The record gives the reactivity of an RNA of 177 nucleotides to DMS and 2A3.
RNA sequence: GGGAACGACUCGAGUAGAGUCGAAAACUGAUUGCUGCAUGCGGUUGCAUGGGAAGCUCAUGUUGACAGAGGCGAUGUCCUCAGAAGGGAGCGGUCAGAAGAGCGUCUUGUAAAAUGUCCACAGUGCAAUUACAAAGCCGUUCGCGGCUUUGUAAUUAAAAGAAACAACAACAACAAC
Reactivity to DMS in 0.01 (KOAc 150mM, MgCl2 10mM, bicine 150mM(pH8.5), 24C), signal-to-noise 2, nucleotides 027 to 126: c040u020g010a130u010u020g030c030u000g030c020a060u000g000c020g020g010u020u010g000c050a000u000g010g020g000a080a080g010c000u020c000a090u010g050u000u000g010a090c100a110g000a070g000g040c020g010a170u000g010u000c010c010u000c040a060g010a160a140g000g030g010a040g020c060g020g000u000c020a070g000a090a050g000a050g000c030g020u000c050u010u000g020u000a050a030a100a050u000g010u000c050c030a070c090a100g010u020g010c140
Reactivity to 2A3 in 0.01 (KOAc 150mM, MgCl2 10mM, bicine 150mM(pH8.5), 24C), signal-to-noise 1, nucleotides 027 to 126: c000u040g000a030u030u190g010c010u020g000c000a060u060g070c010g160g060u210u170g020c050a030u010g000g050g000a060a010g000c000u010c080a060u150g030u000u160g030a040c060a010g030a010g040g070c100g190a210u130g070u150c000c000u010c010a010g040a040a150g100g030g040a030g050c050g010g090u020c020a030g060a110a000g020a110g000c060g000u020c000u050u030g070u110a100a180a070a020u020g010u000c030c010a030c020a070g070u100g010c010
It was measured as part of the RMDB library OK2TRN. The 2A3 profile rests on 739 reads.